An RNA of 177 nucleotides, treated with DMS and read out base by base. The RNA was probed in 150 mM KOAc, 10 mM MgCl2 and 150 mM bicine (pH 8.5) at 24 C. Values cover nucleotides 27 to 126.
RNA sequence: GGGAACGACUCGAGUAGAGUCGAAAAAGUUUUGGUUAGCGCAUACAAAAAUACCCAAAACACGGGUGCGUGGGACGGGCUGCGCGUUAAGCUCAGCAAUCAGUAGCGCGAUAGCUUUAGGUUAUUACGUAGCUGAUGCAUUCGUGCAUCAGCUACGAAAAGAAACAACAACAACAAC
Reactivity to DMS in 0.01 (KOAc 150mM, MgCl2 10mM, bicine 150mM(pH8.5), 24C), signal-to-noise 1, nucleotides 027 to 126: a100g040u030u000u000u000g060g000u020u010a130g010c060g070c080a150u000a120c140a040a010a050a040a060u010a110c090c000c000a020a020a080a190c110a130c060g020g000g000u000g010c020g050u000g000g010g000a200c150g040g000g000c050u000g020c110g000c010g050u030u030a060a150g050c020u060c050a080g050c050a100a040u020c030a090g000u000a080g000c010g040c040g010a020u000a020g020c000u000u000u000a010g020g000u000u010a110u010u020a140
For DMS the reverse transcriptase was MarathonRT.